[RMDB]
RNA sequence: GGGAACGACUCGAGUAGAGUCGAAAAGGCGGCCACGACAGCGUGCUCGUGACGAUCCCCGACGGCGAGAGUGGGCCGAUCCCGACCAGCCUGGAGGAGUGGCUCGAGCCGAUCGCCUCGGAGCGCACGUCAUCGGCCACUUCGGUGGCCGAUGACGAAAAGAAACAACAACAACAAC
Reactivity to 2A3 in 0.01 (KOAc 150mM, MgCl2 10mM, bicine 150mM(pH8.5), 24C), signal-to-noise 1, nucleotides 027 to 126: g150g000c060g030g120c050c000a090c000g020a020c010a000g060c020g110u110g030c070u000c000g090u060g000a080c000g010a020u110c000c000c000c000g080a070c160g090g050c030g000a180g010a000g090u170g000g110g000c030c080g000a000u010c000c000c010g050a110c000c030a110g210c000c110u140g000g000a170g030g000a000g020u250g050g040c000u000c000g010a010g000c020c000g000a160u000c000g020c000c180u050c040g140g000a010g000c160g000c020a140
The record gives the reactivity of an RNA of 177 nucleotides to 2A3.
It was measured as part of the RMDB library OK1LIB.
The RNA was probed in 150 mM KOAc, 10 mM MgCl2 and 150 mM bicine (pH 8.5) at 24 C.
The 2A3 profile rests on 374 reads.